[RMDB]
RNA sequence: GGGAACGACUCGAGUAGAGUCGAAAAGAGUGGAUGUUCCGCCCCCCGAGGGGGCCGAGUGAGGCUUAUCCCGGGGAUCGGCGUCGCCCCCACAUAGCAGACCCCGGGUCCCCUUCCGAACGAGGGGUUCGUACGCCGUUCGCGGCGUACAAAAGAAACAACAACAACAAC
Reactivity to DMS in 0.01 (KOAc 150mM, MgCl2 10mM, bicine 150mM(pH8.5), 24C), signal-to-noise 4, nucleotides 027 to 129: g000a110g050u030g010g000a130u010g000u060u020c030c050g010c000c000c000c000c000c000g050a110g050g000g000g040g090c030c060g020a110g030u120g020a000g000g000c050u020u020a090u000c030c030c030g000g020g020g030a100u020c050g000g000c020g020u020c070g050c090c010c020c000c010a160c190a090u040a000g020c070a060g000a070c070c000c030c000g000g030g050u020c030c050c000c010u020u010c110c070g060a020a010c080g030a000g030g040g000g050u010u050c110
Reactivity to 2A3 in 0.01 (KOAc 150mM, MgCl2 10mM, bicine 150mM(pH8.5), 24C), signal-to-noise 2, nucleotides 027 to 129: g130a050g010u130g000g080a130u050g030u070u080c010c000g080c000c000c000c000c000c000g000a250g060g000g000g030g000c000c010g060a050g050u300g140a090g010g050c010u060u100a110u140c010c000c030g050g000g000g010a100u020c010g020g000c050g010u070c040g040c000c000c000c010c000a080c020a060u110a030g070c040a040g020a060c000c020c000c000g000g020g000u000c000c000c000c000u080u000c050c020g080a080a050c040g010a070g010g000g000g000u000u010c040
Notes: Conditions: 150 mM KOAc, 10 mM MgCl2 and 150 mM bicine (pH 8.5), 24 C. Chemical mapping of a 170-nucleotide RNA with DMS and 2A3. High 2A3 reactivity points to a flexible backbone, as in loops and unpaired stretches. For 2A3 the reverse transcriptase was SuperScript II with manganese. DMS adducts were read by reverse transcription with MarathonRT. In probing experiments dimethyl sulfate is read out at A N1 and C N3, which are open when not base-paired.